[RMDB]
RNA sequence: GGGAACGACUCGAGUAGAGUCGAAAAGUUUACGCUCCAAGAUCGGUGGAUAGCAGCCCUAUCCAUAUCUAGGAGAACUGUGCUAUGUUUAGAAGAUUAGGUAGUCUCUAAACAGAACAAUUUACCUCAUACGUUAGGACGUUCGCGUCCUAACGAAGUCUAUUAACAUCUUCGGAUGUUAAUAGACAAAAGAAACAACAACAACAAC
Reactivity to 2A3 in 0.01 (KOAc 150mM, MgCl2 10mM, bicine 150mM(pH8.5), 24C), signal-to-noise 9, nucleotides 027 to 156: g010u020u070u100a050c040g000c010u000c000c000a020a010g010a030u110c240g140g010u010g000g010a000u000a000g040c070a030g020c060c000c000u000a000u000c000c000a010u020a010u050c010u020a060g010g010a020g030a010a020c070u110g020u040g060c040u050a020u090g010u010u000u000a080g010a300a010g000a040u050u040a020g030g040u040a010g020u000c000u000c000u000a000a000a000c010a030g040a050a030c100a040a030u050u070u070a040c010c010u070c060a110u100a190c010g000u000u000a000g000g000a000c000g010u030u030c140g010c010g080u000c000c000u000a000a000c000g000a010a010
Reactivity to DMS in 0.01 (KOAc 150mM, MgCl2 10mM, bicine 150mM(pH8.5), 24C), signal-to-noise 4, nucleotides 027 to 156: g010u000u010u000a080c050g020c000u000c000c000a120a050g010a030u000c300g030g030u000g010g010a020u000a040g000c040a300g000c250c290c000u000a020u000c000c000a020u000a030u000c010u000a210g000g010a210g010a080a060c060u000g020u010g010c010u000a170u000g010u000u000u000a010g010a090a110g020a030u000u000a120g040g040u010a140g010u000c000u000c010u000a010a010a010c000a020g010a100a050c050a050a080u000u000u000a090c020c020u020c080a140u000a150c010g010u000u000a010g000g010a040c000g020u000u010c270g040c020g020u000c000c000u000a000a000c000g000a010a090
Background
This 207-nucleotide RNA was probed chemically with 2A3 and DMS. For 2A3 the reverse transcriptase was SuperScript II with manganese. For DMS the reverse transcriptase was MarathonRT. The RNA was probed in 150 mM KOAc, 10 mM MgCl2 and 150 mM bicine (pH 8.5) at 24 C. The data come from the RNA Mapping Database (RMDB), library M2RFPK. For DMS, 9,067 sequencing reads were counted. Values cover nucleotides 27 to 156.